This 207-nucleotide RNA was probed chemically with 2A3 and DMS. For DMS, 10,826 sequencing reads were counted. Conditions: 150 mM KOAc, 10 mM MgCl2 and 150 mM bicine (pH 8.5), 24 C. Source: RMDB library OK3TST, as collected in RNAgym. As a SHAPE reagent, 2A3 marks flexible, mostly unpaired nucleotides at the ribose 2'-OH.

[RMDB]
RNA sequence: GGGAACGACUCGAGUAGAGUCGAAAAAGCUCUCUCUUCAGUCUCUCCUAGGAAGAGUCAGCUCUGAGAGAGAGAAGUCAGAGAGUCCUAGGAGAAGAGGAUCGAGAAGGAUCAGGAAGCUCUUCGAAGAGGACUGAAGGAUCUCCUUCGAUCCUUCUAAACUACCCUUAUUCGUAAGGGUAGUUUAAAAAGAAACAACAACAACAAC
Reactivity to 2A3 in 0.01 (KOAc 150mM, MgCl2 10mM, bicine 150mM(pH8.5), 24C), signal-to-noise 6, nucleotides 027 to 156: a000g040c010u020c010u000c000u010c010u100u070c040a060g110u020c010u010c000u010c040c020u050a050g060g070a080a080g050a050g200u120c080a050g050c030u000c010u060g040a050g000a010g010a000g010a020g030a100a020g090u050c050a010g040a010g010a020g120u010c000c010u020a030g020g050a030g010a040a020g010a010g010g020a040u080c070g020a010g020a190a040g060g000a010u020c030a020g080g050a070a020g030c020u010c000u090u070c050g050a100a030g040a030g040g060a020c030u040g010a020a010g030g020a030u020c040u040c070c010u080u050c040g000a000u010c000c000u020u000c010
Reactivity to DMS in 0.01 (KOAc 150mM, MgCl2 10mM, bicine 150mM(pH8.5), 24C), signal-to-noise 4, nucleotides 027 to 156: a100g010c020u000c020u000c000u000c010u000u000c050a090g000u000c030u000c010u000c010c000u010a140g000g010a050a080g010a130g020u000c110a170g010c030u010c020u000g000a100g010a100g020a080g010a060g020a070a070g020u010c060a100g000a110g000a130g010u000c010c010u000a080g010g010a210g010a070a090g010a060g030g000a080u010c000g010a150g020a100a060g000g010a050u000c030a120g010g010a230a120g010c040u000c010u000u000c030g010a190a200g000a070g000g000a050c030u010g000a180a180g010g000a060u000c040u000c020c040u000u000c040g000a040u010c000c010u000u000c020